[RMDB]
RNA sequence: GGGAACGACUCGAGUAGAGUCGAAAAGUGGUGAGCAAUGGGCUAGGAGAAUGCACCUGAGGAGCAGGGCUGAGCAAGGGACUAGCAAGGUCUCAGGGGGGGGAGUUGCUCCAGAGUUCAGGACACAUGUGAUUCUAGGUUUCGACCUAGAAUCACAAAAAGAAACAACAACAACAAC
Reactivity to DMS in 0.01 (KOAc 150mM, MgCl2 10mM, bicine 150mM(pH8.5), 24C), signal-to-noise 1, nucleotides 027 to 126: g000u000g000g010u000g010a010g030c210a130a100u010g050g000g070c120u000a030g100g000a060g000a180a040u010g030c070a160c040c030u010g010a140g020g000a010g010c040a100g010g010g000c090u000g000a080g000c030a100a230g030g000g000a050c030u000a080g020c120a060a100g000g080u000c010u000c030a070g000g000g000g000g000g000g000g000a060g020u000u000g030c010u010c010c040a070g050a110g000u000u010c000a060g010g010a200c160a060c190a180